[RMDB]
RNA sequence: GGGAACGACUCGAGUAGAGUCGAAAAAACAAACAUCAAAUCGCAUUGCAAAGAGUCAAAAAAAUAGAGAGCUUUGCGAGACCUACCAAGGGUGAAGAGAUACCAUCCAAGGAGCUGAAGAGAAAUCGAGAGCUCACGGCGUUCGCGCCGUGAGCAACCAAUUCCAUCUGUUCGCAGAUGGAAUUGGAAAAGAAACAACAACAACAAC
Reactivity to 2A3 in 0.01 (KOAc 150mM, MgCl2 10mM, bicine 150mM(pH8.5), 24C), signal-to-noise 1, nucleotides 027 to 156: a010a000c120a050a080a000c080a080u100c040a050a040a040u010c010g000c000a010u010u010g000c020a110a110a060g100a090g040u080c080a170a220a140a080a010a000a030u220a140g070a020g030a000g020c000u000u020u000g000c000g010a000g060a040c000c000u030a060c050c010a000a030g000g000g000u030g020a120a010g140a030g020a060u130a040c000c010a020u050c000c000a000a040g050g000a040g040c060u080g040a030a020g050a020g050a050a090a000u130c110g020a030g000a020g180c000u010c000a000c020g000g010c000g020u040u070c220g000c000g000c000c000g000u000g000a000g000c000a000a000